Overview:
Structure probing data (2A3 and DMS) for a 177-nucleotide construct. The 2A3 profile rests on 3,488 reads. The DMS profile rests on 2,425 reads.
[RMDB]
RNA sequence: GGGAACGACUCGAGUAGAGUCGAAAAACACUAGAGGUACGUACGUAGCUAGUCAUGACUAGCAUGCUAGCAUGUCGAUCACAUGUCAUCGAGAUAUGUCUGAUCUCGUCUCUAGCUAGCGUCGAUCAUCCUUCACCUACUUCGGUAGGUGAAGGAUAAAAGAAACAACAACAACAAC
Reactivity to 2A3 in 0.01 (KOAc 150mM, MgCl2 10mM, bicine 150mM(pH8.5), 24C), signal-to-noise 4, nucleotides 027 to 126: a020c070a010c050u080a040g010a030g150g060u150a080c070g010u030a000c010g040u020a030g010c010u010a000g040u130c040a060u070g080a160c020u040a080g140c020a050u090g030c000u000a000g040c010a030u080g070u080c040g000a030u050c010a000c000a030u060g060u030c020a080u200c200g140a090g000a300u010a010u020g070u000c070u060g020a020u010c020u020c080g060u020c000u010c010u000a010g000c010u050a070g050c010g070u050c030g030a050u030c030
Reactivity to DMS in 0.01 (KOAc 150mM, MgCl2 10mM, bicine 150mM(pH8.5), 24C), signal-to-noise 3, nucleotides 027 to 126: a080c100a130c080u000a080g010a110g000g010u000a240c080g040u010a060c060g000u000a060g000c010u000a000g020u000c030a040u000g010a130c120u000a100g000c020a080u010g010c020u000a000g020c110a080u000g000u000c060g000a040u000c020a050c030a020u000g010u010c030a220u010c220g000a200g000a010u000a000u000g010u000c200u000g020a000u000c020u030c150g000u000c030u000c020u000a030g010c020u000a080g020c050g000u000c020g000a100u010c150